[RMDB]
RNA sequence: GGGAACGACUCGAGUAGAGUCGAAAACAUAGUGAGAGGUAAAAUUCUUGGAUCUAUGGAAGAUGAACUACUGCGAAAGCAUUUACCAAGGAUGUUUUCAUUAAUCAAGAACGAAAGUUAGGGGAUCGAUUGUAUGGGUGUUCGCACCCAUACAAUCAAAAGAAACAACAACAACAAC
Reactivity to DMS in 0.01 (KOAc 150mM, MgCl2 10mM, bicine 150mM(pH8.5), 24C), signal-to-noise 3, nucleotides 027 to 126: c020a060u000a030g000u000g010a260g000a060g010g010u030a070a140a100a120u070u020c010u000u010g000g000a190u000c030u000a020u000g020g000a080a030g000a060u000g000a080a050c120u000a080c080u000g010c080g020a030a030a050g030c030a010u000u000u000a050c090c070a080a110g000g000a010u000g000u000u000u000u000c020a090u040u030a060a150u010c110a070a060g010a090a110c090g000a050a070a060g000u010u000a060g000g000g000g000a180u030c140
Reactivity to 2A3 in 0.01 (KOAc 150mM, MgCl2 10mM, bicine 150mM(pH8.5), 24C), signal-to-noise 5, nucleotides 027 to 126: c000a000u020a000g050u050g040a070g010a030g070g070u180a060a080a090a090u110u060c010u000u040g050g040a020u030c010u000a040u030g020g040a050a030g020a070u150g020a040a060c050u120a050c040u140g070c060g020a030a000a000g000c010a020u010u020u060a150c060c020a060a020g100g000a000u010g020u020u000u020u020c020a010u050u110a040a060u100c050a020a050g050a120a040c070g040a100a020a020g040u040u060a060g000g030g020g030a030u090c070
An RNA of 177 nucleotides, treated with DMS and 2A3 and read out base by base. Source: RMDB libraries RFM100 and RFMREP, as collected in RNAgym. Reactivities are given for positions 27 through 126.